[RMDB]
An RNA of 207 nucleotides, treated with DMS and 2A3 and read out base by base.
High DMS reactivity at an A or C suggests that its Watson-Crick edge is free.
The 2A3 profile rests on 1,255 reads.
Source: RMDB library OK3TST, as collected in RNAgym.
Conditions: 150 mM KOAc, 10 mM MgCl2 and 150 mM bicine (pH 8.5), 24 C.

RNA sequence: GGGAACGACUCGAGUAGAGUCGAAAAGAGAGGUGAGCUUAAUGGCGCCGUUGUGGAUAAAGUUGGAGAACAAGAUAUUGUGUUUUAUUUUGCUUUGCGUAGGGAUGGUCAAGAUGUUAUCUUCAGCCAUAUAGACAGCCUAGGAGGCAGCCAUUACCUGAGUCAGAACGUUCGCGUUCUGACUCAGAAAAGAAACAACAACAACAAC
Reactivity to DMS in 0.01 (KOAc 150mM, MgCl2 10mM, bicine 150mM(pH8.5), 24C), signal-to-noise 1, nucleotides 027 to 156: g050a120g000a120g020g050u010g010a100g000c080u010u000a070a100u000g030g020c000g030c060c010g030u000u000g030u010g010g010a120u000a050a060a150g000u010u010g030g010a090g000a110a010c100a080a030g010a070u020a040u010u030g030u000g030u000u000u000u000a060u010u010u000u020g010c060u000u000u020g020c050g000u000a150g010g010g000a030u000g020g020u000c040a050a090g020a010u000g030u000u000a050u000c010u010u010c030a050g080c030c060a210u000a190u000a130g030a090c010a100g010c010c030u010a120g000g000a210g030g050c030a090g030c030c020a130u000u000a090c140
Reactivity to 2A3 in 0.01 (KOAc 150mM, MgCl2 10mM, bicine 150mM(pH8.5), 24C), signal-to-noise 2, nucleotides 027 to 156: g070a000g030a000g000g000u030g010a050g030c000u080u120a020a010u120g000g030c030g000c030c030g020u060u040g010u000g020g030a070u080a100a120a020g010u010u080g090g010a040g010a050a010c040a070a050g070a040u080a050u090u080g050u000g050u070u060u070u020a080u020u090u060u070g050c030u030u020u050g050c030g020u030a070g010g030g020a000u040g020g040u060c020a010a030g030a100u060g070u200u150a040u060c020u040u060c010a010g000c010c020a000u040a000u020a160g080a040c030a020g030c000c000u030a070g060g060a020g010g000c020a000g020c030c000a000u060u040a050c020